[RMDB]
This 207-nucleotide RNA was probed chemically with DMS and 2A3. For DMS, 5,007 sequencing reads were counted. Source: RMDB library RNAMAK, as collected in RNAgym. 2A3 is a SHAPE reagent: it acylates the 2'-hydroxyl of flexible nucleotides of all four kinds. The RNA was probed in 150 mM KOAc, 10 mM MgCl2 and 150 mM bicine (pH 8.5) at 24 C. For 2A3 the reverse transcriptase was SuperScript II with manganese.
RNA sequence: GGGAACGACUCGAGUAGAGUCGAAAACCAAUGACUUCGGUCAUUGGAAAAAAGCGUACUACACACGCUGGACGUCAACAGCGAAUCCCAAAUAGGAUUCGACAUGACGCCCAGAACUACGUGUGUAUCGCAAAAAACCAUGCGUUCGCGCAUGGAAACGAUACGCUAUAUUCGUAUAGCGUAUCGUAAAAGAAACAACAACAACAAC
Reactivity to DMS in 0.01 (KOAc 150mM, MgCl2 10mM, bicine 150mM(pH8.5), 24C), signal-to-noise 2, nucleotides 027 to 156: c000c000a020a010u000g010a040c000u000u000c300g110g040u000c000a020u000u000g000g010a000a010a050a150a070a060g010c030g030u000a050c160u000a020c000a010c000a020c020g010c000u000g010g010a050c000g020u020c000a050a110c070a170g030c000g000a010a010u010c010c000c010a060a150a210u000a060g040g000a020u010u000c000g010a010c060a300u000g000a010c000g010c000c000c010a100g030a060a170c000u000a150c000g000u000g000u000g000u010a000u000c030g050c010a000a030a080a050a110a120c010c000a000u000g000c000g000u000u010c300g010c000g010c000a010u000g000g000a010a070
Reactivity to 2A3 in 0.01 (KOAc 150mM, MgCl2 10mM, bicine 150mM(pH8.5), 24C), signal-to-noise 3, nucleotides 027 to 156: c000c000a000a000u000g000a000c020u030u090c300g080g000u010c020a010u000u030g010g070a120a060a050a000a030a000g040c040g020u080a130c070u010a000c020a000c000a000c000g010c010u000g000g000a000c010g010u010c010a050a080c040a260g050c030g000a000a000u020c030c050c050a170a270a070u300a090g000g010a000u010u010c010g060a080c090a050u050g000a000c000g000c010c000c000a010g030a090a070c200u300a070c040g010u010g000u000g000u010a000u050c010g000c000a010a060a040a080a000a020c010c010a000u000g010c000g020u060u080c300g000c000g000c110a010u000g000g000a090a050